[RMDB]
RNA sequence: GGGAACGACUCGAGUAGAGUCGAAAACGUCACGUCGGCGCGCAGCGCGGCCGCGCGGCCGUCGAGCGACGCGAGCGCGGAUUCGCGGCCGUACGAUGCGGCGUCGACGCGCGAGCGCCGCUUGCCAAUACUGCGUCCUGUUCGCAGGACGCAGUAUAAAAGAAACAACAACAACAAC
Reactivity to 2A3 in 0.01 (KOAc 150mM, MgCl2 10mM, bicine 150mM(pH8.5), 24C), signal-to-noise 1, nucleotides 027 to 126: c010g080u000c010a010c090g130u130c030g090g000c040g000c000g040c140a030g070c030g050c050g000g030c000c020g060c030g030c060g040g040c040c000g110u190c050g020a030g000c000g220a100c070g050c070g120a230g040c210g010c060g060g060a150u090u010c030g000c000g020g000c000c010g010u050a050c090g010a050u200g000c010g070g020c000g160u120c070g010a040c000g000c060g000c000g030a020g020c030g010c000c120g030c030u020u020g030c010c040a080
Reactivity to DMS in 0.01 (KOAc 150mM, MgCl2 10mM, bicine 150mM(pH8.5), 24C), signal-to-noise 1, nucleotides 027 to 126: c050g020u020c030a050c030g010u000c000g000g030c020g030c000g050c010a200g000c050g030c020g020g030c060c010g080c040g010c030g010g000c030c000g000u020c000g010a110g020c080g020a140c050g010c040g030a220g010c120g030c010g010g000a120u020u010c010g000c010g010g000c000c000g040u010a130c250g000a110u000g020c040g000g020c010g050u020c080g010a170c040g020c000g000c050g000a210g020c020g020c010c000g010c010u010u000g050c040c070a130

Structure probing data (2A3 and DMS) for a 177-nucleotide construct. The RNA was probed in 150 mM KOAc, 10 mM MgCl2 and 150 mM bicine (pH 8.5) at 24 C. Source: RMDB library OK2TRN, as collected in RNAgym. The 2A3 profile rests on 778 reads.